RNA sequence: GGGAACGACUCGAGUAGAGUCGAAAAGAUAUGGAACCCUCACGGGCUGAUGACCUCGGAAACGAGCAAGGCCGUGACAUGGGUUCCUAAGUCAAAACAGCCAACGACGUUCGCGUCGUUGGCUGAAGGUAGAUACCUAGUUCGCUAGGUAUCUACCAAAAGAAACAACAACAACAAC
Reactivity to DMS in 0.01 (KOAc 150mM, MgCl2 10mM, bicine 150mM(pH8.5), 24C), signal-to-noise 5, nucleotides 027 to 126: g000a050u000a300u000g000g010a010a000c000c000c010u000c010a010c000g010g030g020c010u000g030a130u010g000a110c300c010u000c010g000g000a110a100a170c010g000a030g000c030a050a120g010g020c000c000g020u000g000a050c300a080u010g000g020g010u000u000c000c000u000a010a090g020u010c040a090a060a110a260c010a010g000c020c010a010a010c000g030a000c000g010u000u050c270g030c020g000u000c000g010u000u000g000g000c010u000g000a000a010
Reactivity to 2A3 in 0.01 (KOAc 150mM, MgCl2 10mM, bicine 150mM(pH8.5), 24C), signal-to-noise 3, nucleotides 027 to 126: g010a000u080a050u160g000g020a010a010c030c030c000u030c000a030c030g130g180g080c020u060g050a290u160g060a160c040c000u010c020g010g040a060a070a030c010g000a010g020c020a040a100g030g060c000c000g000u010g000a000c080a140u120g010g000g000u000u000c000c000u000a030a000g000u010c040a000a000a140a260c000a000g000c000c020a000a010c010g000a000c010g030u100u160c300g000c000g120u030c020g000u010u010g000g000c040u000g000a000a000
The record gives the reactivity of an RNA of 177 nucleotides to DMS and 2A3. The DMS profile rests on 4,353 reads. As a SHAPE reagent, 2A3 marks flexible, mostly unpaired nucleotides at the ribose 2'-OH. It was measured as part of the RMDB library TTRDEL. For 2A3 the reverse transcriptase was SuperScript II with manganese.